Record summary
This 177-nucleotide RNA was probed chemically with 2A3. Reactivities are given for positions 27 through 126. Conditions: 150 mM KOAc, 10 mM MgCl2 and 150 mM bicine (pH 8.5), 24 C.
RNA sequence: GGGAACGACUCGAGUAGAGUCGAAAACAAUAAGAGGGACAAGAAUCUGACCUGCACCUCCUCGUGGUGUCCCUCGGAGACGUGCUCAACGGGCGGCCGACGCAGGCAGAAAAGACGAAGACGUCAACGCACUACUAAUAUUCGUAUUAGUAGUGCGAAAAGAAACAACAACAACAAC
Reactivity to 2A3 in 0.01 (KOAc 150mM, MgCl2 10mM, bicine 150mM(pH8.5), 24C), signal-to-noise 2, nucleotides 027 to 126: c100a050a130u210a240a070g000a010g000g000g030a000c030a130a110g100a060a150u060c010u140g110a200c000c030u000g000c030a030c010c000u000c040c000u060c000g080u140g010g000u090g030u040c030c000c000u000c000g000g010a030g000a010c040g040u090g010c020u010c050a050a040c030g050g010g000c010g000g020c000c050g010a020c060g000c020a010g080g000c010a000g000a010a050a000a000g020a000c000g020a150a020g100a010c050g020u040c010a010a010